[RMDB]
RNA sequence: GGGAACGACUCGAGUAGAGUCGAAAAGCGGUGGUGGACGCCGUUCCAGCGUGCUAUCCAGCUCCGAGGAUCCGCUGUCGAGCCUUUUGUUGGGCUCCUCCUCGAACGCGUUCUUGCCUCGCGACACCAUUUACUCAGCCUUCGGGCUGAGUAAAUGAAAAGAAACAACAACAACAAC
Reactivity to 2A3 in 0.01 (KOAc 150mM, MgCl2 10mM, bicine 150mM(pH8.5), 24C), signal-to-noise 8, nucleotides 027 to 126: g010c010g080g050u190g030g020u050g040g000a010c010g040c110c090g010u040u010c020c010a000g010c000g100u140g030c070u100a040u020c000c020a040g060c100u100c090c070g060a160g010g010a020u000c020c010g000c010u040g080u160c080g000a000g000c000c010u100u160u140u200g290u170u230g030g000g000c000u000c000c020u120c010c000u080c020g010a010a000c010g010c000g020u050u020c020u060u160g030c010c010u010c010g000c010g010a010c010a030c010
Reactivity to DMS in 0.01 (KOAc 150mM, MgCl2 10mM, bicine 150mM(pH8.5), 24C), signal-to-noise 2, nucleotides 027 to 126: g000c000g000g010u050g010g050u000g000g000a010c020g000c070c030g000u000u000c000c050a020g000c010g060u000g050c170u020a000u020c020c020a150g000c070u020c060c040g000a180g000g000a000u000c040c000g000c010u010g010u040c240g000a020g000c010c000u000u040u040u000g010u030u020g010g030g010c000u000c010c170u020c050c040u020c110g000a020a030c070g020c000g020u000u000c010u020u060g050c040c000u000c000g000c000g000a060c150a220c090
Conditions: 150 mM KOAc, 10 mM MgCl2 and 150 mM bicine (pH 8.5), 24 C. This 177-nucleotide RNA was probed chemically with 2A3 and DMS. DMS adducts were read by reverse transcription with MarathonRT. For 2A3, 6,910 sequencing reads were counted. It was measured as part of the RMDB library OK1LIB. The DMS profile rests on 4,107 reads.